[RMDB]
RNA sequence: GGGAACGACUCGAGUAGAGUCGAAAAGAUUUACCAUAGAAUAACAAAUUUAUGAUUUUGUGUCUUUGUUUGUUCGGACACAUUAUCUAUACGAAUAAGAACGGUUGAGGGCAUUCGUAUUCAACUGGGUAGAUAACCCUUUCGAGGGUUAUCUACCAAAAGAAACAACAACAACAAC
Reactivity to DMS in 0.01 (KOAc 150mM, MgCl2 10mM, bicine 150mM(pH8.5), 24C), signal-to-noise 1, nucleotides 027 to 126: g010a070u010u010u100a170c000c000a120u000a240g000a130a100u000a060a130c140a000a150a080u010u000u000a160u030g010a000u000u000u000u000g020u000g040u000c000u000u010u000g000u000u000u020g000u000u000c030g000g030a030c000a000c000a000u000u000a030u000c000u010a030u000a000c170g000a000a010u010a130a150g000a120a220c110g000g000u020u000g000a050g000g020g000c170a060u000u010c060g030u000a010u000u010c090a210a090c130u010g020
Reactivity to 2A3 in 0.01 (KOAc 150mM, MgCl2 10mM, bicine 150mM(pH8.5), 24C), signal-to-noise 3, nucleotides 027 to 126: g030a030u130u130u130a210c010c020a050u050a200g090a040a190u170a100a040c080a070a090a080u240u270u140a160u150g000a010u010u000u000u000g000u010g000u000c000u000u000u110g070u060u110u090g110u040u020c020g000g000a000c010a000c000a010u000u000a000u000c000u020a040u000a030c070g020a090a080u130a150a000g040a130a000c000g090g050u030u110g060a130g020g040g020c050a070u140u020c070g000u060a030u050u050c030a010a010c060u020g040